[RMDB]
RNA sequence: GGGAACGACUCGAGUAGAGUCGAAAAAUAAGGUUCGCCUUAUGUGGUCGGGGUCACGGGAGCGAUCCCCGAAGAACGUACUGAAGCCUCCACGGUACGGGAGGAGGAUCGCAUCGAUCGUGACGGAGGCACCCCCUGGUAUGUGUUCGCACAUAAACUUCCAUGUAGACUUCGGUCUACAUGGAAGAAAAGAAACAACAACAACAAC
Reactivity to 2A3 in 0.01 (KOAc 150mM, MgCl2 10mM, bicine 150mM(pH8.5), 24C), signal-to-noise 2, nucleotides 027 to 156: a000u050a040a010g030g040u030u080c170g180c060c020u080u000a020u080g140u030g100g010u180c090g000g000g050g000u050c040a010c020g060g030g030a030g010c000g000a020u030c050c010c020c000g010a010a010g020a030a000c000g000u010a010c010u020g040a160a000g030c000c000u030c010c000a020c000g000g000u000a010c040g000g010g000a050g020g020a070g030g000a020u000c010g000c060a120u010c070g040a080u110c060g020u010g020a070c030g000g020a040g030g000c010a050c000c000c000c000c020u020g000g130u110a040u030g030u020g070u040u080c110g140c070a000c000a050u220a120a130a050
The data come from the RNA Mapping Database (RMDB), library RNAMAK.
The record gives the reactivity of an RNA of 207 nucleotides to 2A3.
For 2A3, 1,067 sequencing reads were counted.
The RNA was probed in 150 mM KOAc, 10 mM MgCl2 and 150 mM bicine (pH 8.5) at 24 C.